[RMDB]
RNA sequence: GGGAACGACUCGAGUAGAGUCGAAAAGAUAUGGAAAGCUGGGCUGCCUAGCGUUUGACGUAUAGGUAUUGCUCGGAAACGAGCAAUACCUAUACCGAGCUAGGAACUACAGCCGCUUUCCUAAGUCGUUUCUUAUUAACUUCGGUUAAUAAGAAACAAAAGAAACAACAACAACAAC
Reactivity to DMS in 0.01 (KOAc 150mM, MgCl2 10mM, bicine 150mM(pH8.5), 24C), signal-to-noise 3, nucleotides 027 to 126: g000a100u010a300u010g010g000a020a000a020g010c030u020g070g030g010c010u000g000c000c000u000a000g020c010g030u000u010u030g020a160c300g000u000a000u000a000g000g010u000a000u000u000g000c000u000c030g030g000a080a100a300c010g010a020g010c020a010a010u010a010c000c000u000a010u000a000c010c010g010a090g000c000u010a000g000g010a050a020c080u030a300c000a010g010c000c000g020c000u000u000u000c000c000u010a030a090g010u000c130
Reactivity to 2A3 in 0.01 (KOAc 150mM, MgCl2 10mM, bicine 150mM(pH8.5), 24C), signal-to-noise 2, nucleotides 027 to 126: g050a090u140a040u170g010g010a030a010a010g020c130u300g140g210g070c010u000g030c000c000u010a010g020c060g000u090u240u300g030a020c000g000u000a010u000a020g030g010u000a000u000u000g020c010u020c000g000g040a060a050a020c010g010a000g040c000a020a000u010a000c000c000u000a000u010a000c000c000g000a000g020c000u010a010g020g040a010a030c060u290a030c030a020g000c010c000g000c000u010u040u040c000c010u010a100a020g150u040c050